Source information:
The record gives the reactivity of an RNA of 177 nucleotides to 2A3 and DMS. The RNA was probed in 150 mM KOAc, 10 mM MgCl2 and 150 mM bicine (pH 8.5) at 24 C. For 2A3 the reverse transcriptase was SuperScript II with manganese. For 2A3, 2,255 sequencing reads were counted. For DMS the reverse transcriptase was MarathonRT. Reactivities are given for positions 27 through 126.

RNA sequence: GGGAACGACUCGAGUAGAGUCGAAAACGCGUGACGCAUCCGAACACAGAUAACAUAUAAUAGCAUAAAGUAAUUGAUGUCUAGAUGCAUAUUUUAACAUCAUAGUGUUCAUUCGAUUAUAUCCUACGUGCUAUUUCAAGUUCGCUUGAAAUAGCACAAAAGAAACAACAACAACAAC
Reactivity to 2A3 in 0.01 (KOAc 150mM, MgCl2 10mM, bicine 150mM(pH8.5), 24C), signal-to-noise 3, nucleotides 027 to 126: c060g000c030g040u100g070a030c070g000c080a050u020c050c070g040a020a010c040a000c000a020g040a030u080a160a020c040a040u170a000u050a190a070u030a020g000c000a010u050a050a120a000g050u120a130a090u150u210g110a110u110g050u000c020u020a070g020a070u020g000c070a040u020a080u070u070u010u090a040a050c030a010u010c010a040u060a080g000u000g000u040u020c040a040u090u070c020g000a010u090u130a080u110a010u130c000c020u000a030c040
Reactivity to DMS in 0.01 (KOAc 150mM, MgCl2 10mM, bicine 150mM(pH8.5), 24C), signal-to-noise 2, nucleotides 027 to 126: c190g020c080g020u010g010a090c100g000c090a050u020c160c100g000a020a040c000a050c000a080g020a050u020a070a040c090a110u000a110u000a010a080u000a040g020c050a040u000a020a050a050g000u000a070a170u020u010g000a100u000g000u030c020u000a040g010a050u000g010c060a130u000a060u010u010u010u030a000a110c130a040u000c020a070u000a050g000u000g010u010u000c050a070u000u010c100g010a030u020u000a080u000a070u000c020c020u000a080c210